RNA sequence: GGGAACGACUCGAGUAGAGUCGAAAAGACGGAAAAGAUCGAACCUAAGAACAUCAGGAAGUGUGAGCCGAAUCCUAGGGCUCCUAGGGACGCAUCGUCCGAUGCGAAAUAAACACUAACGUCGAAAAUGAGCAUAUUACUUCGGUAAUAUGCUCAUAAAAGAAACAACAACAACAAC
Reactivity to DMS in 0.01 (KOAc 150mM, MgCl2 10mM, bicine 150mM(pH8.5), 24C), signal-to-noise 5, nucleotides 027 to 126: g020a040c000g000g020a090a070a080a070g010a080u040c050g020a060a150c100c050u000a090a110g020a170a140c080a040u020c060a060g000g000a070a050g010u000g000u000g000a010g030c040c020g000a070a160u020c000c010u000a020g030g020g000c160u050c030c040u020a020g010g030g000a160c010g000c000a080u000c000g010u030c110c110g000a010u000g000c040g020a060a030a100u060a070a120a090c130a070c080u020a030a160c030g020u010c040g000a040a060a050
Reactivity to 2A3 in 0.01 (KOAc 150mM, MgCl2 10mM, bicine 150mM(pH8.5), 24C), signal-to-noise 4, nucleotides 027 to 126: g000a000c020g020g090a050a080a050a030g120a040u150c140g040a060a100c010c000u030a090a010g030a100a050c030a120u120c080a050g050g050a110a040g090u040g000u020g050a010g020c000c000g020a050a040u060c000c010u040a040g020g070g040c030u050c030c000u010a010g010g000g010a000c000g000c010a020u000c020g140u040c040c130g000a000u020g000c040g040a050a140a030u200a060a100a000c050a010c050u090a060a010c050g050u020c030g040a030a000a000
This 177-nucleotide RNA was probed chemically with DMS and 2A3. For DMS the reverse transcriptase was MarathonRT. Conditions: 150 mM KOAc, 10 mM MgCl2 and 150 mM bicine (pH 8.5), 24 C. 2A3 adducts were read by reverse transcription with SuperScript II with manganese. Values are in units of 0.01, from 0 to 300, in steps of 10. The DMS profile rests on 7,982 reads.